[RMDB]
RNA sequence: GGGAACGACUCGAGUAGAGUCGAAAAAGUGGGCUCAUGUGCUUGAGGAGCCAGAGGACAUGUUGAGGGUGACAUAGGUUCUGAAGUUCGUACAGAUACUUAUGCAGUAUGGAUUCUUGGAAAACCUUCUUUAGUCAUGUGAUAGAAAAAUAACAGCCACCAUACGCAUGUUCGCAUGCGUAUGGUGAAAAGAAACAACAACAACAAC
Reactivity to 2A3 in 0.01 (KOAc 150mM, MgCl2 10mM, bicine 150mM(pH8.5), 24C), signal-to-noise 1, nucleotides 027 to 156: a000g060u100g060g000g000c020u050c060a090u070g050u100g060c000u020u010g010a010g020g000a010g000c000c010a010g010a010g000g000a010c030a080u080g020u080u020g020a010g020g020g040u060g010a030c020a020u090a000g000g000u050u000c000u040g090a080a040g040u090u280c060g030u100a090c020a060g040a050u010a050c000u090u060a050u110g020c040a000g030u090a000u030g010g000a050u040u000c010u060u080g000g000a000a000a060a060c000c000u040u060c000u000u060u050a060g020u080c090a080u070g000u020g140a080u050a150g180a010a060a040a060a000u110a040a020c020a010g000c000
Chemical mapping of a 207-nucleotide RNA with 2A3. For 2A3 the reverse transcriptase was SuperScript II with manganese. Reactivities are given for positions 27 through 156.